An RNA of 177 nucleotides, treated with 2A3 and read out base by base. Conditions: 150 mM KOAc, 10 mM MgCl2 and 150 mM bicine (pH 8.5), 24 C. The data come from the RNA Mapping Database (RMDB), library OK1LIB. Values cover nucleotides 27 to 126. For 2A3, 445 sequencing reads were counted.

RNA sequence: GGGAACGACUCGAGUAGAGUCGAAAAGGAGCCAUCUCAGCUACCCAAAAGAGAAAAGAAACAAGCUCAGAAGCUAUUUCCUCUUUGCUCCAGGCCAUUGCCUAUCUAGGCAAGCCUAGCUACAUAACGGUUCUUGAGACUUCGGUCUCAAGAACCGAAAAGAAACAACAACAACAAC
Reactivity to 2A3 in 0.01 (KOAc 150mM, MgCl2 10mM, bicine 150mM(pH8.5), 24C), signal-to-noise 2, nucleotides 027 to 126: g000g000a000g060c060c070a250u010c080u060c090a050g130c000u130a160c010c000c000a040a040a030a000g080a000g000a000a080a000a000g070a010a090a000c190a130a000g050c000u000c020a210g090a300a020g040c020u000a000u000u060u000c000c000u020c000u000u040u100g000c000u020c000c000a000g000g020c020c060a170u020u000g010c000c000u140a300u150c110u300a020g000g000c000a000a000g060c000c000u010a000g040c060u090a100c080a190u180a110a170